Source: RMDB library RFM100, as collected in RNAgym. This 177-nucleotide RNA was probed chemically with DMS and 2A3. The reactions ran in a buffer of 150 mM KOAc, 10 mM MgCl2 and 150 mM bicine (pH 8.5), at 24 C. For DMS the reverse transcriptase was MarathonRT. The DMS profile rests on 1,373 reads.

[RMDB]
RNA sequence: GGGAACGACUCGAGUAGAGUCGAAAAUGCCAGCUAGCAAUUGGGUGUAGCUACUUUAAUCGAUCAUUCAUUCAGUCGCUUCCCGGGAAACCAAAGCUUUUGGGCUCCGGGGGAAGAAUGGUUGCAAUACGCUGGCUAUAUUCGUAUAGCCAGCGUAAAAAGAAACAACAACAACAAC
Reactivity to DMS in 0.01 (KOAc 150mM, MgCl2 10mM, bicine 150mM(pH8.5), 24C), signal-to-noise 1, nucleotides 027 to 126: u010g040c060c020a090g030c070u000a080g000c010a080a130u030u000g030g020g060u020g030u030a020g010c060u020a090c170u000u020u000a080a060u000c000g030a030u010c010a010u000u000c000a040u000u000c020a100g000u000c060g000c060u000u000c010c000c000g000g000g030a050a050a060c050c000a010a020a120g000c240u000u000u000u000g000g000g010c120u000c000c020g040g000g000g000g010a070a010g000a030a000u010g000g000u000u000g000c200a070a130
Reactivity to 2A3 in 0.01 (KOAc 150mM, MgCl2 10mM, bicine 150mM(pH8.5), 24C), signal-to-noise 2, nucleotides 027 to 126: u020g050c000c010a040g000c000u060a000g010c010a080a150u120u190g040g110g000u140g050u110a060g050c010u050a090c010u080u050u220a140a180u160c030g000a020u010c010a050u090u000c000a010u000u090c010a110g270u070c010g120c150u150u130c010c000c000g000g000g000a030a020a000c000c000a000a000a090g300c020u090u060u050u010g000g070g000c040u000c000c020g050g010g040g000g000a000a020g010a000a000u000g040g000u000u000g080c030a010a010